[RMDB]
RNA sequence: GGGAACGACUCGAGUAGAGUCGAAAAAAAGACAGGGUUUCACUGUGUUAGCCAGGAUGGUCUCGAUUUCCUGACCUCGUGAUCCGCCUGCCUUGGCCUCCUAAAGUGCUGGGAUUACAGACGUGACGAAGAAGAAAUUGUUCGCAAUUUCUUCUUCAAAAGAAACAACAACAACAAC
Reactivity to DMS in 0.01 (KOAc 150mM, MgCl2 10mM, bicine 150mM(pH8.5), 24C), signal-to-noise 7, nucleotides 027 to 126: a060a040a030g010a050c030a030g000g000g010u000u000u000c020a060c020u010g010u000g010u000u010a090g010c020c000a020g010g010a050u000g010g000u000c090u010c160g010a130u000u000u000c010c000u000g000a040c030c020u000c060g020u000g000a020u000c010c030g010c010c010u000g000c020c000u000u000g010g010c080c030u000c010c020u010a040a070a080g010u000g010c020u000g000g010g000a090u000u000a070c040a030g010a050c060g020u000g020a150c210
Reactivity to 2A3 in 0.01 (KOAc 150mM, MgCl2 10mM, bicine 150mM(pH8.5), 24C), signal-to-noise 5, nucleotides 027 to 126: a000a000a000g050a000c020a020g030g000g000u020u050u060c020a020c050u160g010u030g030u160u110a020g020c020c010a010g020g010a020u070g040g100u080c070u070c180g150a140u030u060u040c000c000u010g030a050c010c000u020c020g010u010g010a010u010c010c020g110c210c000u010g010c010c000u000u020g040g020c020c000u030c000c010u150a220a110a030g110u140g090c010u020g000g040g070a140u070u100a060c020a030g040a030c040g080u070g050a070c090
Description
An RNA of 177 nucleotides, treated with DMS and 2A3 and read out base by base. The reactions ran in a buffer of 150 mM KOAc, 10 mM MgCl2 and 150 mM bicine (pH 8.5), at 24 C.